[RMDB]
RNA sequence: GGGAACGACUCGAGUAGAGUCGAAAAGAAACCCUGGGAGCAUGCCGAGGGGCGGUUGGCCUCGUUAAAAGCCGCAAAGUUAUAGUUGCAAACGACGAUAACUACGCUCUAGCCGCUUAAUGCCGCUAGCCAUCUACCACACGUUUCGCACAUGGGCGCAAUAGAACACGUUCGCGUGUUCUAUUGCAAAAGAAACAACAACAACAAC
Reactivity to 2A3 in 0.01 (KOAc 150mM, MgCl2 10mM, bicine 150mM(pH8.5), 24C), signal-to-noise 1, nucleotides 027 to 156: g050a090a070a040c000c000c030u000g020g040g000a040g040c040a050u080g000c000c020g050a040g060g000g000g010c020g000g000u060u090g060g030c000c000u010c000g040u040u050a030a110a030a000g020c000c020g000c030a220a060a000g000u010u020a010u020a100g040u060u050g080c110a120a100a200c110g010a010c010g000a020u010a050a050c020u070a050c100g000c030u010c010u050a020g010c030c030g020c070u080u150a110a040u300g010c000c000g000c020u020a030g020c000c030a110u000c030u060a050c010c130a070c020a010c040g010u020u000u030c000g010c010a040c000a170u110g090g040g040c080